[RMDB]
The record gives the reactivity of an RNA of 177 nucleotides to 2A3 and DMS. For DMS the reverse transcriptase was MarathonRT. Values cover nucleotides 27 to 126.
RNA sequence: GGGAACGACUCGAGUAGAGUCGAAAAAUGCAUCUGAUCGAGCGCGGGCAUCGGGUGGCGGUGCUGGCGGUCGACCCGUCGUCGACCCGCACGGGUGGAUCGAUUCUUGGUGAUAAAACCCGGAUGGCACGUGACUAGUGUUCGCACUAGUCACGUGAAAAGAAACAACAACAACAAC
Reactivity to 2A3 in 0.01 (KOAc 150mM, MgCl2 10mM, bicine 150mM(pH8.5), 24C), signal-to-noise 2, nucleotides 027 to 126: a000u160g010c000a020u000c020u060g000a050u040c030g000a010g110c030g000c010g040g000g000c010a010u030c040g030g130g130u170g160g060c010g010g000u010g000c030u040g190g030c030g030g030u040c000g030a030c000c000c020g030u040c020g020u020c070g050a100c000c020c010g000c000a000c050g050g000g000u000g030g000a030u020c020g010a030u130u160c040u090u090g060g020u070g030a100u100a140a080a030a020c000c000c030g000g050a110u080g060g000
Reactivity to DMS in 0.01 (KOAc 150mM, MgCl2 10mM, bicine 150mM(pH8.5), 24C), signal-to-noise 2, nucleotides 027 to 126: a090u010g010c050a060u010c020u010g010a070u010c040g010a030g020c070g030c020g010g000g010c020a050u010c060g000g000g040u010g050g010c040g040g010u000g000c020u010g010g030c020g010g000u010c010g000a030c010c010c210g010u010c060g000u000c040g010a090c020c030c010g030c160a070c090g000g000g030u030g010g000a090u000c020g010a060u010u010c140u010u020g020g020u020g000a070u000a040a080a080a090c010c000c020g020g030a110u010g030g000
Overview: For 2A3, 1,757 sequencing reads were counted. The reactions ran in a buffer of 150 mM KOAc, 10 mM MgCl2 and 150 mM bicine (pH 8.5), at 24 C.